[RMDB]
RNA sequence: GGGAACGACUCGAGUAGAGUCGAAAAUUACCACGUUGGAGAGAGUGUUGAUUUGGACUCCCUGAUAGGGCUUAGGCAUCUUUCAGCCCUUGCUUCGGGUUUUCGUCCUUAUUGGCCUCCCUCAUUGACAUAGAGAGUACUUCGGUACUCUCUAUGUAAAAGAAACAACAACAACAAC
Reactivity to 2A3 in 0.01 (KOAc 150mM, MgCl2 10mM, bicine 150mM(pH8.5), 24C), signal-to-noise 3, nucleotides 027 to 126: u050u060a090c010c000a050c120g070u110u210g080g010a000g000a000g000a010g000u300g010u020u040g020a020u010u000u010g010g010a000c020u080c020c000c000u030g030a060u050a030g000g030g000c010u050u070a020g040g050c090a150u070c070u070u140u040c020a010g000c010c020c010u010u040g030c020u100u090c020g000g010g050u090u050u060u200c030g000u000c000c000u000u000a010u000u000g010g000c000c000u000c000c000c000u000c010a020u040u130g040
Reactivity to DMS in 0.01 (KOAc 150mM, MgCl2 10mM, bicine 150mM(pH8.5), 24C), signal-to-noise 5, nucleotides 027 to 126: u000u010a260c020c000a140c290g020u010u010g020g010a030g000a040g000a030g020u010g030u010u000g000a030u000u000u000g010g010a030c010u000c140c010c010u000g000a070u000a030g010g010g010c010u000u010a050g010g010c210a100u010c090u000u000u000c170a080g000c000c000c000u000u010g010c190u010u000c140g000g000g010u000u000u000u010c240g010u000c000c000u000u000a020u000u000g010g000c000c000u000c000c000c000u000c030a090u010u000g000